The record gives the reactivity of an RNA of 177 nucleotides to 2A3 and DMS. The reactions ran in a buffer of 150 mM KOAc, 10 mM MgCl2 and 150 mM bicine (pH 8.5), at 24 C. For DMS the reverse transcriptase was MarathonRT. The 2A3 profile rests on 1,611 reads.
RNA sequence: GGGAACGACUCGAGUAGAGUCGAAAACUACUUCUGCAGAAUCUGGGAGGGCAUACGCCGAAAAUACCUUUGAAAGUGCACCAUGGGUUCCAUCUUCUCUCUUUGCCGGCGCAGAGUAUACCCCCUGAUGAAUUUACACCUUCGGGUGUAAAUUCAUAAAAGAAACAACAACAACAAC
Reactivity to 2A3 in 0.01 (KOAc 150mM, MgCl2 10mM, bicine 150mM(pH8.5), 24C), signal-to-noise 3, nucleotides 027 to 126: c020u040a030c010u070u070c010u020g010c010a030g020a140a110u050c040u070g030g010g020a110g000g050g010c010a100u110a110c060g000c000c030g060a040a020a010a030u270a080c020c010u110u120u070g110a140a130a030g120u110g050c050a030c040c020a040u060g010g110g000u070u030c000c000a030u020c010u110u020c000u000c000u000c000u040u100u070g070c030c010g030g000c060g000c010a010g000a020g060u020a030u060a040c020c040c000c000c000u030g020
Reactivity to DMS in 0.01 (KOAc 150mM, MgCl2 10mM, bicine 150mM(pH8.5), 24C), signal-to-noise 2, nucleotides 027 to 126: c050u000a070c010u000u040c110u060g010c060a160g000a090a140u020c010u000g060g010g000a030g010g040g000c030a080u030a030c180g000c000c000g000a090a050a070a150u000a020c040c060u000u020u070g000a150a070a120g000u010g010c020a040c080c030a060u020g010g020g000u000u000c000c010a070u000c020u010u030c000u000c030u020c020u000u020u000g000c090c040g020g000c130g000c050a070g000a020g000u000a030u040a140c070c020c000c010c050u040g000